An RNA of 207 nucleotides, treated with 2A3 and DMS and read out base by base. For 2A3, 4,139 sequencing reads were counted. The reactions ran in a buffer of 150 mM KOAc, 10 mM MgCl2 and 150 mM bicine (pH 8.5), at 24 C.
RNA sequence: GGGAACGACUCGAGUAGAGUCGAAAAGCGUACUACGACACUUUUGACGGCUUCCCACUGCAAGCCACUCCCAAAUAGGAGUGGUGAUGACCAGUGCAGCCGAUAAGUGUCGUAUCGCAAACUGUUUAAUUCAGUGUUCGCACUGAAUUAAACAGAAGUCACUAAGAACGUUCGCGUUCUUAGUGACAAAAGAAACAACAACAACAAC
Reactivity to 2A3 in 0.01 (KOAc 150mM, MgCl2 10mM, bicine 150mM(pH8.5), 24C), signal-to-noise 4, nucleotides 027 to 156: g010c010g030u110a110c060u000a000c030g010a000c000a010c000u000u000u100u280g300a150c020g000g010c000u020u010c000c020c000a000c000u000g000c010a140a130g000c000c000a000c000u030c000c020c030a200a280a090u300a180g000g000a000g000u000g000g040u010g010a010u070g040a010c090c020a000g000u020g050c200a000g030c000c000g050a050u010a040a000g010u000g010u000c000g000u000a000u030c000g000c000a040a000a100c000u010g000u000u000u010a000a000u000u000c000a000g010u000g060u090u110c250g060c080a000c000u000g000a000a000u000u000a000a000a000c000a000g000a020a020
Reactivity to DMS in 0.01 (KOAc 150mM, MgCl2 10mM, bicine 150mM(pH8.5), 24C), signal-to-noise 1, nucleotides 027 to 156: g000c020g030u030a060c140u010a020c020g000a040c010a000c000u020u000u000u010g000a210c140g010g010c020u000u000c090c060c010a030c030u000g000c010a230a300g000c010c000a030c000u000c000c030c080a020a180a240u010a030g030g030a020g010u010g000g030u030g000a040u010g010a250c300c000a010g010u000g050c240a040g000c010c000g040a100u000a000a010g000u000g000u000c010g030u010a000u010c040g060c040a110a080a140c010u000g020u000u000u000a000a000u010u000c000a010g000u000g050u000u050c300g060c030a020c000u050g020a060a000u000u000a000a000a030c010a020g070a030a140